[RMDB]
RNA sequence: GGGAACGACUCGAGUAGAGUCGAAAACGACUACGUCAACGUGUCCGCGACGUUCGACGUGACGCUUUCUGCACUCGACAACGCACUGCUGAGCGGAACGGGCAUCUCGGGAAUGUUGCGUGCGCUCCCUGCUAAGAUGGUUCGCCAUCUUAGCAGGAAAAGAAACAACAACAACAAC
Reactivity to 2A3 in 0.01 (KOAc 150mM, MgCl2 10mM, bicine 150mM(pH8.5), 24C), signal-to-noise 7, nucleotides 027 to 126: c050g120a050c050u110a000c050g060u080c030a030a010c030g010u010g090u060c020c020g020c040g040a020c010g010u030u040c080g060a050c000g020u010g050a030c030g010c040u060u110u030c050u060g010c020a030c030u050c010g060a040c050a140a070c030g020c040a060c060u070g000c020u050g030a010g010c010g020g030a030a020c010g020g020g020c010a060u020c030u030c030g030g010g020a100a050u050g010u040u030g050c030g020u020g020c020g000c010u030c000
Reactivity to DMS in 0.01 (KOAc 150mM, MgCl2 10mM, bicine 150mM(pH8.5), 24C), signal-to-noise 2, nucleotides 027 to 126: c020g020a160c100u010a000c010g000u020c000a000a000c040g000u000g050u000c070c010g000c170g000a090c030g000u000u020c100g050a020c030g030u000g010a220c070g000c090u010u010u010c060u030g010c120a030c050u020c020g000a070c210a130a140c040g010c070a130c030u000g010c080u010g000a100g000c000g020g030a150a080c100g030g010g020c030a010u030c000u000c000g000g000g000a120a010u010g000u000u010g000c000g010u010g000c020g000c040u010c040

Overview:
The record gives the reactivity of an RNA of 177 nucleotides to 2A3 and DMS.